An RNA of 207 nucleotides, treated with DMS and 2A3 and read out base by base. DMS adducts were read by reverse transcription with MarathonRT. Source: RMDB library M2RFPK, as collected in RNAgym. Reactivities are given for positions 27 through 156.
[RMDB]
RNA sequence: GGGAACGACUCGAGUAGAGUCGAAAAACGGACUACGGUCCGAAGGGUUCGGGGUACUAGUGUGAAUGACCGGCUAGUACCCUGUGCUAGUGGUUUAUCUACUGAUGUUCAAUUAAGGGCAUUUGAAAAAAGACUCCUAACUUCGGUUAGGAGUCAACUAGUCAUUUACGUUCGCGUAAAUGACUAGAAAAGAAACAACAACAACAAC
Reactivity to DMS in 0.01 (KOAc 150mM, MgCl2 10mM, bicine 150mM(pH8.5), 24C), signal-to-noise 1, nucleotides 027 to 156: a110c010g050g010a020c000u010a080c210g140g030u010c020c000g030a060a060g020g000g000u010u010c000g020g010g030g050u000a010c030u080a000g020u000g030u000g000a080a210u000g010a170c150c040g030g000c020u000a000g000u000a020c000c000c000u000g000u000g060c000u000a090g040u000g000g020u000u000u020a160u000c010u000a170c100u050g020a030u000g010u000u010c010a150a210u000u030a140a160g020g010g030c010a020u000u000u000g010a020a100a060a150a100a130g000a010c000u000c000c000u000a030a030c000u000u000c300g050g040u000u010a010g010g000a000g000u020c000a010a050
Reactivity to 2A3 in 0.01 (KOAc 150mM, MgCl2 10mM, bicine 150mM(pH8.5), 24C), signal-to-noise 2, nucleotides 027 to 156: a030c010g000g000a000c010u040a020c210g100g000u050c030c030g010a030a030g110g020g020u030u160c060g000g000g000g010u000a000c020u000a010g020u030g000u040g210a300a190u210g060a080c010c080g000g030c000u000a000g010u010a010c020c000c000u020g000u010g010c000u020a050g070u030g130g060u080u170u100a100u090c030u040a040c020u010g030a050u030g030u110u060c070a200a180u200u250a300a280g030g010g000c060a040u040u080u210g120a080a060a000a000a000a010g000a000c000u000c010c000u000a000a000c000u050u060c250g090g000u010u000a000g000g000a000g000u000c000a000a000